An RNA of 177 nucleotides, treated with DMS and 2A3 and read out base by base. For DMS, 18,153 sequencing reads were counted. Source: RMDB library M2PK90, as collected in RNAgym. Conditions: 150 mM KOAc, 10 mM MgCl2 and 150 mM bicine (pH 8.5), 24 C.
RNA sequence: GGGAACGACUCGAGUAGAGUCGAAAAGAAGAGAGCGUAGCACACACUCAGUCUGUACGACAGUCUGACACACACCUACGCUAGUGCAUCGUGUGUGUGAUAUCGAUGUUGCACGAAGAUGAGGAAACCAUCAAUGAUGAUUCGUCAUCAUUGAUGGAAAAGAAACAACAACAACAAC
Reactivity to DMS in 0.01 (KOAc 150mM, MgCl2 10mM, bicine 150mM(pH8.5), 24C), signal-to-noise 9, nucleotides 027 to 126: g010a110a090g000a120g010a070g010c030g020u000a040g010c070a080c120a110c080a120c120u000c020a030g000u000c010u000g010u010a110c210g010a100c010a020g010u000c010u000g020a020c060a040c080a080c070a050c160c020u000a020c030g010c030u000a070g020u000g020c030a040u010c060g010u010g010u010g010u000g010u000g010a080u010a070u000c100g010a070u010g010u000u000g010c020a030c020g010a080a090g000a080u000g000a070g010g000a110a080a150
Reactivity to 2A3 in 0.01 (KOAc 150mM, MgCl2 10mM, bicine 150mM(pH8.5), 24C), signal-to-noise 9, nucleotides 027 to 126: g160a070a020g120a000g020a010g000c020g020u040a010g030c160a010c010a000c000a010c060u010c010a010g040u000c010u020g060u080a120c110g100a040c180a000g030u000c010u020g020a000c000a000c000a000c000a000c130c010u050a010c020g000c020u060a050g080u050g080c010a020u040c040g030u020g020u020g000u000g010u020g110a050u040a030u170c050g020a050u130g010u060u050g000c010a000c040g030a070a030g030a060u100g030a020g040g090a060a060a030